[RMDB]
RNA sequence: GGGAACGACUCGAGUAGAGUCGAAAAAAUACCAUCUGGGGGCUAAAAGGCUCGUAAGCGCAGGGUAAACUGCAACAAGGUUCGGGAAUAAAAAUUGUGGCAUCGAUAGUCAGUACUUACAUUACUGUAGCGAAGCUAGAUUCGUCUAGCUUCGCUAAAAAGAAACAACAACAACAAC
Reactivity to 2A3 in 0.01 (KOAc 150mM, MgCl2 10mM, bicine 150mM(pH8.5), 24C), signal-to-noise 2, nucleotides 027 to 126: a000a010u300a030c000c000a010u020c000u010g040g000g000g020g000c020u100a020a000a210a000g010g050c010u010c100g040u040a070a170g050c010g030c080a010g000g050g000u070a060a050a000c030u090g000c030a020a060c050a110a050g010g000u030u030c020g000g000g060a070a000u190a070a000a010a010a050u160u240g020u000g000g000c020a020u030c010g030a030u070a090g010u020c000a000g020u030a060c020u000u030a070c000a090u060u070a030c040u000g000
Reactivity to DMS in 0.01 (KOAc 150mM, MgCl2 10mM, bicine 150mM(pH8.5), 24C), signal-to-noise 4, nucleotides 027 to 126: a030a070u030a120c040c030a110u020c050u020g000g020g020g020g030c050u020a050a080a070a110g010g000c000u000c050g020u040a070a080g010c120g000c040a040g010g020g010u010a030a090a080c040u010g000c040a070a050c130a110a050g000g010u000u000c050g000g000g000a080a050u050a040a040a030a070a100u030u010g010u000g000g010c030a060u010c050g000a080u030a030g010u000c020a020g010u010a020c060u010u030a090c160a080u020u000a050c040u000g010